[RMDB]
RNA sequence: GGGAACGACUCGAGUAGAGUCGAAAACCAUAACAGUUCGCUGUUAUGGACUGUCGGAAUGCGGAAUAAUUAAUCGUCCGCUAACGAUUAAUACCGACUAUAAAGCGUAACACUUCGGUGUUACGAAAUCCUUGCAUCAAUUCGUUGAUGCAAGGAUAAAAGAAACAACAACAACAAC
Reactivity to 2A3 in 0.01 (KOAc 150mM, MgCl2 10mM, bicine 150mM(pH8.5), 24C), signal-to-noise 6, nucleotides 027 to 126: c010c000a000u010a010a000c000a000g030u060u090c150g060c120u000g010u020u000a010u000g010g030a050c050u070g000u010c010g000g040a200a070u130g010c020g010g100a030a060u130a110a140u230u200a090a120u130c090g030u010c000c000g000c040u010a020a010c020g020a010u010u090a020a020u050a070c000c020g030a000c030u030a060u080a280a100a020g080c010g010u000a010a000c000a000c000u020u070c210g100g000u000g010u010u000a000c000g000a020a010
Reactivity to DMS in 0.01 (KOAc 150mM, MgCl2 10mM, bicine 150mM(pH8.5), 24C), signal-to-noise 5, nucleotides 027 to 126: c000c000a000u000a000a000c010a010g010u000u000c190g020c010u000g000u000u000a010u000g010g000a110c120u000g000u000c010g010g010a180a120u010g010c040g010g000a050a040u010a090a120u010u010a080a070u000c180g010u000c040c070g010c100u010a050a090c070g000a050u010u010a060a080u000a180c000c000g000a030c110u010a080u010a080a080a130g010c000g010u000a000a000c000a000c000u000u010c180g010g010u000g000u000u000a010c000g000a020a040